[RMDB]
RNA sequence: GGGAACGACUCGAGUAGAGUCGAAAAUCAGCCCCUCCACCUUGGGGUGCCCUAUUCGAGGCACUGCAGCUUCGAUAGAAAGGCUAAGAACGUCGCAAUGACGUAAGGUGGGACUUUUCCUUCUGGACUUUGUACCUUUGUUCGCAAAGGUACAAAGAAAAGAAACAACAACAACAAC
Reactivity to DMS in 0.01 (KOAc 150mM, MgCl2 10mM, bicine 150mM(pH8.5), 24C), signal-to-noise 2, nucleotides 027 to 126: u010c050a180g000c000c000c010c020u000c010c010a000c000c010u000u010g000g000g000g000u010g000c000c000c000u000a120u010u000c000g000a040g020g030c000a050c140u000g060c220a120g000c020u000u030c010g030a040u000a010g000a110a140a110g010g000c010u030a040a090g020a080a080c010g000u010c000g020c170a130a090u010g000a010c000g010u000a000a020g000g010u000g000g010g010a120c160u020u000u010u010c100c090u000u010c040u000g000g000a300
Reactivity to 2A3 in 0.01 (KOAc 150mM, MgCl2 10mM, bicine 150mM(pH8.5), 24C), signal-to-noise 3, nucleotides 027 to 126: u080c010a030g030c010c000c000c000u000c000c000a010c010c010u010u020g000g000g000g050u070g010c000c000c000u010a030u020u050c010g000a020g000g000c030a030c220u260g050c030a050g000c000u010u010c010g000a010u000a010g030a050a060a000g010g020c010u060a050a050g040a080a030c010g000u000c010g000c210a270a300u300g000a000c000g020u020a000a010g000g000u000g000g000g000a000c010u180u150u090u090c050c090u070u030c010u020g020g000a030
This 177-nucleotide RNA was probed chemically with DMS and 2A3. The DMS profile rests on 1,666 reads. DMS adducts were read by reverse transcription with MarathonRT. High 2A3 reactivity points to a flexible backbone, as in loops and unpaired stretches. The reactions ran in a buffer of 150 mM KOAc, 10 mM MgCl2 and 150 mM bicine (pH 8.5), at 24 C. It was measured as part of the RMDB library VIROID. Reactivities are rounded to 0.1 and cut off at 0 and 3.